About this RNA:
An RNA of 177 nucleotides, treated with DMS and 2A3 and read out base by base. For DMS the reverse transcriptase was MarathonRT. It was measured as part of the RMDB library M2PK90. The reactions ran in a buffer of 150 mM KOAc, 10 mM MgCl2 and 150 mM bicine (pH 8.5), at 24 C.
RNA sequence: GGGAACGACUCGAGUAGAGUCGAAAAUAAAUGAGCGUACUGCACACUCAGACUGUACGCUAUCUGAGUGUGUCAACUUCAAAGUCCAACGACACACACAAGGCGUUGGAACAAGAGUGUGAGAAAAUGUUUAGCCAACAUUCGUGUUGGCUAAACAAAAAGAAACAACAACAACAAC
Reactivity to DMS in 0.01 (KOAc 150mM, MgCl2 10mM, bicine 150mM(pH8.5), 24C), signal-to-noise 2, nucleotides 027 to 126: u000a100a160a050u020g000a050g020c100g010u000a040c130u010g000c020a000c000a010c000u000c000a060g000a050c080u000g000u000a140c250g050c040u000a040u000c040u010g000a040g010u000g000u000g000u000c070a070a010c060u000u030c050a060a130a110g000u010c010c030a000a080c050g000a040c090a110c060a070c280a150c170a070a030g000g020c010g000u000u000g000g000a000a020c110a080a230g010a040g080u000g030u000g000a060g000a000a050a100a070
Reactivity to 2A3 in 0.01 (KOAc 150mM, MgCl2 10mM, bicine 150mM(pH8.5), 24C), signal-to-noise 1, nucleotides 027 to 126: u180a000a100a110u150g050a020g050c060g040u050a050c090u030g050c020a000c000a000c000u020c000a000g010a040c020u050g070u120a030c070g000c190u020a030u000c010u000g000a000g020u000g010u000g040u050c020a000a000c010u080u060c040a110a080a000g060u000c000c010a030a010c010g040a020c010a000c020a010c030a010c010a120a120g070g000c020g020u010u030g000g000a000a000c000a020a050g080a020g020u090g020u070g040a090g130a030a110a010a000